[RMDB]
RNA sequence: GGGAACGACUCGAGUAGAGUCGAAAAAGUCUUUUGGUAAGAUGCUGAUAAUGAGUAGGGGAGAUGAAAGUUAAUCGUUCCCUGUCUCUCCGCUGGAAAGAAUUGCAAAACAAAGAAAAUCCCUGUACUUAUAUGAGCUGUUCGCAGCUCAUAUAAGAAAAGAAACAACAACAACAAC
Reactivity to DMS in 0.01 (KOAc 150mM, MgCl2 10mM, bicine 150mM(pH8.5), 24C), signal-to-noise 2, nucleotides 027 to 126: a060g000u000c000u000u000u010u000g060g000u000a090a070g000a220u000g000c040u000g020a120u020a060a130u010g010a030g000u000a120g050g000g010g000a000g000a010u000g000a130a140a130g000u000u000a090a130u000c040g010u000u000c000c000c000u000g010u000c010u000c000u000c010c000g000c030u000g010g000a040a050a090g000a080a150u000u010g010c030a030a120a090a070c050a000a010a030g000a070a020a080a110u000c000c000c010u000g000u000a180
Reactivity to 2A3 in 0.01 (KOAc 150mM, MgCl2 10mM, bicine 150mM(pH8.5), 24C), signal-to-noise 2, nucleotides 027 to 126: a000g030u000c000u000u060u080u110g110g010u070a120a130g050a190u060g010c020u000g060a050u010a240a100u150g070a030g040u140a230g020g020g020g000a000g020a010u030g050a050a120a000g080u170u300a110a070u120c000g000u000u000c010c000c000u000g050u060c000u010c020u000c000c000g000c010u030g070g070a110a070a050g070a110a200u080u040g020c020a000a120a000a000c000a000a050a010g000a000a050a010a010u050c010c000c040u020g070u030a070